[RMDB]
RNA sequence: GGGAACGACUCGAGUAGAGUCGAAAACAGUUCGAGCGGUCGAACUUAGAGGGGAGUGUGAUCCUGGUACCGCCGUAGAAACAGGAUUACGACGUCUUACCGAGAUUCAAACUCGGCCCCUCUCAGAGGUGACUCUGAGCGAAAGGUCUGUGCUAAGGAGAAUACCUAUGUUCGCAUAGGUAUUCUCAAAAGAAACAACAACAACAAC
Reactivity to 2A3 in 0.01 (KOAc 150mM, MgCl2 10mM, bicine 150mM(pH8.5), 24C), signal-to-noise 3, nucleotides 027 to 156: c070a000g010u000u000c000g010a010g000c010g030g050u080c000g010a010a010c000u090u140a040g020a040g060g000g010g000a140g020u160g000u010g020a000u000c000c000u010g020g030u040a020c010c010g010c010c000g190u290a050g040a050a300a010c020a000g010g000a000u030u020a030c050g050a040c030g110u090c070u190u180a080c010c020g000a000g000a020u200u280c120a110a090a100c030u000c000g000g040c020c000c000c000u000c000u000c000a030g030a010g000g050u110g050a060c020u000c000u010g030a020g010c070g090a090a020a040g050g040u010c080u130g060u140g060c050u070a040a030g060
Reactivity to DMS in 0.01 (KOAc 150mM, MgCl2 10mM, bicine 150mM(pH8.5), 24C), signal-to-noise 1, nucleotides 027 to 156: c080a060g010u000u000c010g000a160g090c090g000g000u000c000g000a000a000c010u000u000a080g000a170g020g010g010g020a100g030u010g030u020g000a040u000c000c060u000g000g020u010a050c050c010g040c000c160g000u030a170g030a100a140a200c080a110g020g020a150u000u010a030c020g010a120c080g010u000c000u000u000a130c010c010g020a010g010a140u000u010c120a110a120a150c020u000c000g030g010c020c000c000c000u000c000u000c040a010g020a050g030g050u010g000a300c020u000c000u010g010a020g010c040g000a040a070a070g010g010u000c040u020g070u020g030c000u020a090a200g020